Chemical mapping of a 207-nucleotide RNA with DMS and 2A3. 2A3 adducts were read by reverse transcription with SuperScript II with manganese. Reactivities are rounded to 0.1 and cut off at 0 and 3. High 2A3 reactivity points to a flexible backbone, as in loops and unpaired stretches. For DMS the reverse transcriptase was MarathonRT. The 2A3 profile rests on 2,201 reads. Conditions: 150 mM KOAc, 10 mM MgCl2 and 150 mM bicine (pH 8.5), 24 C. Values cover nucleotides 27 to 156.
RNA sequence: GGGAACGACUCGAGUAGAGUCGAAAACUCAUUUCGAUGAGGUAGCCGAUAUGGACCACUACCCACCAAAUGUAUUCGAGGAUCUAAUAUCGGAAACGAUAUUAGGGAGAAUACCUCUUUGAGGUGGUCCUAAGUCAAGUUUUCAGUUCGCUGAAAAGUUUCUACCGAAUUUCGAUUCGGUAGAAACAAAAGAAACAACAACAACAAC
Reactivity to DMS in 0.01 (KOAc 150mM, MgCl2 10mM, bicine 150mM(pH8.5), 24C), signal-to-noise 1, nucleotides 027 to 156: c010u010c000a050u000u010u000c210g000a060u000g000a060g010g010u000a160g040c060c030g010a030u000a220u000g010g000a040c020c010a000c010u000a040c000c010c000a300c110c030a010a300a060u000g010u000a030u000u000c000g010a150g060g010a090u010c010u000a000a000u000a010u000c010g010g040a110a110a210c010g010a060u010a010u000u000a010g010g010g010a010g000a060a020u000a020c000c040u010c040u000u000u000g020a110g050g040u000g000g000u000c000c010u010a010a090g000u000c000a100a150g000u000u000u000u010c010a010g020u000u000c250g010c040u010g000a040a040a070a110
Reactivity to 2A3 in 0.01 (KOAc 150mM, MgCl2 10mM, bicine 150mM(pH8.5), 24C), signal-to-noise 3, nucleotides 027 to 156: c010u000c010a030u090u160u160c290g120a030u030g010a000g080g050u100a050g140c130c090g040a050u070a070u210g010g010a000c000c000a010c020u190a270c070c030c020a020c000c000a020a000a010u180g010u000a020u000u000c030g030a250g050g000a010u000c000u000a000a000u000a000u000c010g020g020a110a040a040c000g000a000u000a010u010u000a000g010g010g000a010g000a000a000u010a000c000c000u000c000u000u000u020g030a040g000g010u000g010g010u020c000c000u000a020a000g040u030c090a050a090g070u030u030u020u050c020a020g020u050u130c200g090c110u050g040a060a120a040a120